[RMDB]
The record gives the reactivity of an RNA of 177 nucleotides to DMS and 2A3.
For 2A3 the reverse transcriptase was SuperScript II with manganese.
The DMS profile rests on 1,700 reads.

RNA sequence: GGGAACGACUCGAGUAGAGUCGAAAAGAUAUGGACCAUGUACGAGGUAAAUAGCUCGUUGAAACCGCUCUUCGGAAACGAAGAGCGGUGGAGAGCUAUUUAAAUAUGUACCGCUGGUCCUAAGUCAGAUACUCCCUAAGUUCGCUUAGGGAGUAUCAAAAGAAACAACAACAACAAC
Reactivity to DMS in 0.01 (KOAc 150mM, MgCl2 10mM, bicine 150mM(pH8.5), 24C), signal-to-noise 1, nucleotides 027 to 126: g000a050u000a300u010g000g000a030c020c000a020u010g020u000a010c000g010a210g010g010u000a010a010a010u000a000g010c000u000c000g020u000u020g000a190a250a040c010c000g030c010u000c000u000u010c000g040g000a090a100a210c000g030a000a000g010a000g020c000g010g010u000g010g000a040g000a010g030c000u000a010u000u000u000a010a100a020u000a100u010g000u000a010c000c010g020c000u000g000g000u010c000c010u010a000a070g000u000c060a110
Reactivity to 2A3 in 0.01 (KOAc 150mM, MgCl2 10mM, bicine 150mM(pH8.5), 24C), signal-to-noise 1, nucleotides 027 to 126: g020a000u130a040u160g000g010a000c010c010a030u220g020u030a030c080g110a080g270g190u050a000a010a030u020a000g000c020u000c050g210u250u080g010a020a020a010c000c000g000c000u000c000u000u000c010g000g020a090a040a060c000g020a000a030g000a000g010c070g030g000u000g010g020a010g000a000g020c020u020a000u000u000u000a000a000a000u300a110u240g010u050a000c010c020g030c000u000g020g000u000c000c000u010a030a020g000u000c010a010